Conditions: 150 mM KOAc, 10 mM MgCl2 and 150 mM bicine (pH 8.5), 24 C. This 177-nucleotide RNA was probed chemically with 2A3 and DMS. For DMS the reverse transcriptase was MarathonRT.
RNA sequence: GGGAACGACUCGAGUAGAGUCGAAAACUUUGAACGUUCGCGUUCAAAGAAACCUCUAAGGAGAUUGGCGAGGACGACGCUGCGGAGCGCGUUUGCCAAUAAAAAGCGUAGGCUUCGGCCUACGCAAUCAGUAAGGAAUCUUCGGAUUCCUUACUGAAAAAGAAACAACAACAACAAC
Reactivity to 2A3 in 0.01 (KOAc 150mM, MgCl2 10mM, bicine 150mM(pH8.5), 24C), signal-to-noise 4, nucleotides 027 to 126: c000u000u000u010g000a000a010c010g020u040u050c240g000c010g080u000u010c030a010a000a000g010a040a020a010c020c000u060c090u160a110a150g200g040a220g080a130u010u030g020g000c010g020a100g110g060a060c020g040a110c000g010c000u120g110c090g150g190a040g000c020g000c000g000u020u010u100g000c000c020a010a000u060a020a070a010a010a000g000c010g000u010a000g020g000c020u040u030c240g060g000c010c000u000a000c000g000c000a000a010
Reactivity to DMS in 0.01 (KOAc 150mM, MgCl2 10mM, bicine 150mM(pH8.5), 24C), signal-to-noise 4, nucleotides 027 to 126: c000u000u010u000g010a000a010c000g030u000u020c210g030c020g020u010u000c000a010a000a000g010a090a100a150c050c010u000c180u000a120a120g020g010a100g000a050u000u000g010g010c010g010a130g020g000a050c020g000a120c000g010c010u000g010c300g000g000a030g010c010g000c000g020u000u000u010g010c000c000a010a020u000a030a060a080a090a060g000c010g000u000a000g000g000c000u000u020c240g030g010c000c000u000a000c000g010c010a010a010